An RNA of 207 nucleotides, treated with 2A3 and read out base by base. The data come from the RNA Mapping Database (RMDB), library RSTRND. 2A3 adducts were read by reverse transcription with SuperScript II with manganese.

[RMDB]
RNA sequence: GGGAACGACUCGAGUAGAGUCGAAAACCUGAGGAUGAGGGAAGAGACGAACCAGGCUAGCCGCCGGGAGGCCUGUCGGUAGGCGGAACGGACGGCGAAGCGAAAUAUACCGACUACGCUCGUAGAUGCUUAAGUGGCGAUGCCUCUGGACGUGGGUCAAUCGGCUUAUCUUCGGAUAAGCCGAUUGAAAAGAAACAACAACAACAAC
Reactivity to 2A3 in 0.01 (KOAc 150mM, MgCl2 10mM, bicine 150mM(pH8.5), 24C), signal-to-noise 1, nucleotides 027 to 156: c000c010u000g020a040g030g000a030u100g010a040g020g010g040a060a000g010a000g010a000c020g050a020a030c000c040a020g000g070c010u030a030g000c000c020g000c000c020g000g070g000a050g300g020c000c060u060g020u040c010g000g000u020a000g000g000c000g020g000a040a000c000g000g040a050c000g010g000c000g020a020a030g030c010g010a010a010a000u020a000u000a000c000c000g020a020c020u060a030c010g000c010u020c030g020u020a060g000a130u110g000c010u200u120a120a030g020u050g100g000c000g020a030u080g010c030c000u030c040u010g040g010a020c020g050u060g010g010g040u020